[RMDB]
RNA sequence: GGGAACGACUCGAGUAGAGUCGAAAAUCAUUUGAAAUUGCCUGUGAAGACUGUUAAGGGCUUUAUCAUAAGUUAUUUAAAGGAGUGACUUUUUUCUUGAAUAGCCAAAAAUUAGUCAUAAGCUCUCUGGGAGAAGAGAAUUCGUUCUCUUCUCCCAAAAAGAAACAACAACAACAAC
Reactivity to DMS in 0.01 (KOAc 150mM, MgCl2 10mM, bicine 150mM(pH8.5), 24C), signal-to-noise 1, nucleotides 027 to 126: u010c050a140u010u000u020g030a030a100a120u000u000g010c010c030u000g000u010g010a090a180g010a080c110u010g020u000u000a150a140g000g000g000c010u000u000u000a040u010c020a050u000a050a090g000u000u000a030u000u000u000a040a060a120g010g020a060g020u010g010a040c010u000u000u000u050u000u000c150u020u000g010a070a120u000a100g000c090c020a010a060a040a010a010u010u000a000g010u010c000a100u010a080a240g020c060u000c050u010c120